[RMDB]
This 177-nucleotide RNA was probed chemically with 2A3 and DMS.
The DMS profile rests on 7,954 reads.
DMS adducts were read by reverse transcription with MarathonRT.
The reactions ran in a buffer of 150 mM KOAc, 10 mM MgCl2 and 150 mM bicine (pH 8.5), at 24 C.

RNA sequence: GGGAACGACUCGAGUAGAGUCGAAAAGAUAUGGAUACCCGAUAGCGAGGAUCUGGGUGUCGGAAACGACACACCAGGGAGCUGUUGGGUAUCCUAAGUCAAACGUACCAUCUUCGGAUGGUACGAACUUGAAUACUUUCUUCGGAAAGUAUUCAAGAAAAGAAACAACAACAACAAC
Reactivity to 2A3 in 0.01 (KOAc 150mM, MgCl2 10mM, bicine 150mM(pH8.5), 24C), signal-to-noise 3, nucleotides 027 to 126: g010a000u060a030u160g000g000a000u000a010c000c010c010g020a020u020a000g010c030g110a300g130g010a040u020c000u010g030g000g010u000g000u000c000g000g000a060a080a000c020g000a000c040a010c200a270c020c010a010g010g030g000a020g000c010u010g020u000u010g010g000g020u000a000u000c000c000u000a000a000g000u000c030a110a060a040c010g000u000a000c000c000a010u000c010u050u080c300g230g000a000u000g000g000u010a000c000g000a020a010
Reactivity to DMS in 0.01 (KOAc 150mM, MgCl2 10mM, bicine 150mM(pH8.5), 24C), signal-to-noise 4, nucleotides 027 to 126: g010a030u000a300u010g010g010a010u000a000c010c000c000g010a010u000a010g030c000g000a100g010g000a010u000c000u000g000g010g030u000g010u000c000g030g000a110a060a170c000g010a010c000a010c010a180c000c000a000g000g000g010a030g030c010u000g020u010u000g000g000g000u000a010u000c000c000u000a000a090g010u000c020a090a140a290c020g000u000a010c000c000a000u000c000u000u010c260g030g000a020u000g000g010u000a000c010g000a020a080